[RMDB]
RNA sequence: GGGAACGACUCGAGUAGAGUCGAAAAGAACUGGCAAAAGGCGGCAGGGAGCUUGUGGAAGGCGAAACAGGAGUAAUCCCGAGAGAAACAGGGUUUUCACCCUUCCUUUCUGAUUCGGUUUCCUUCCGGAUUUAUAUUCCUUCGGGAAUAUAAAUCCAAAAGAAACAACAACAACAAC
Reactivity to 2A3 in 0.01 (KOAc 150mM, MgCl2 10mM, bicine 150mM(pH8.5), 24C), signal-to-noise 1, nucleotides 027 to 126: g000a060a000c030u030g030g020c020a030a040a060a170g090g000c040g020g010c010a010g020g040g010a030g030c000u010u060g020u060g060g050a000a030g060g000c020g050a050a020a020c040a000g060g000a010g000u040a050a100u080c040c010c010g020a030g010a000g000a030a070a070c300a070g050g000g040u060u080u190u190c090a020c010c000c000u000u030c030c000u010u040u060c070u000g090a230u140u020c020g020g120u020u040u000c020c010u000u090c060c050
Reactivity to DMS in 0.01 (KOAc 150mM, MgCl2 10mM, bicine 150mM(pH8.5), 24C), signal-to-noise 2, nucleotides 027 to 126: g010a090a100c050u000g030g020c070a040a060a150a090g040g020c080g010g000c070a050g010g020g030a080g010c080u010u010g030u020g000g000a100a060g010g000c060g010a070a050a080c140a050g010g010a050g000u000a070a090u000c080c000c010g010a060g000a040g010a010a020a010c180a010g010g000g010u000u010u010u010c170a070c000c010c000u000u010c040c020u000u000u000c020u010g000a110u010u000c020g000g030u000u010u000c010c000u000u010c140c100